RNA sequence: GGGAACGACUCGAGUAGAGUCGAAAAGAUAUGGACGAGUUUAUGGGAGCAGCUACUCGGAAACGAGUAGGCUGCGAGGAUCAUACUGACUCGUCCUAAGUCAAAGGUUACACUUCGGUGUAACCAAGUAGUAUCGUCACUUCGGUGACGAUACUACAAAAGAAACAACAACAACAAC
Reactivity to DMS in 0.01 (KOAc 150mM, MgCl2 10mM, bicine 150mM(pH8.5), 24C), signal-to-noise 1, nucleotides 027 to 126: g000a030u000a300u000g000g000a020c000g060a000g000u000u000u040a030u000g030g020g050a030g030c010a000g050c000u000a000c000u000c030g030g000a060a040a170c000g010a010g040u000a010g020g020c030u000g010c000g020a040g040g000a060u000c040a020u000a030c300u010g010a020c020u000c000g000u000c000c000u010a000a010g000u000c010a090a140a160g000g010u000u000a000c000a000c000u000u000c180g040g000u000g000u000a010a000c000c010a000a100
Reactivity to 2A3 in 0.01 (KOAc 150mM, MgCl2 10mM, bicine 150mM(pH8.5), 24C), signal-to-noise 1, nucleotides 027 to 126: g030a040u060a020u160g000g000a030c020g000a030g010u090u100u140a150u090g000g000g060a100g000c010a000g000c000u000a000c000u000c000g010g010a000a030a020c000g000a000g020u000a060g100g160c020u000g050c000g000a000g000g010a060u150c000a030u020a090c090u170g100a030c000u000c000g010u030c000c010u000a000a000g040u010c030a050a020a260g010g000u000u010a000c030a010c040u060u170c300g220g010u000g000u000a000a000c000c000a000a020

This 177-nucleotide RNA was probed chemically with DMS and 2A3. The DMS profile rests on 1,144 reads. Source: RMDB library TTRDES, as collected in RNAgym. The reactions ran in a buffer of 150 mM KOAc, 10 mM MgCl2 and 150 mM bicine (pH 8.5), at 24 C.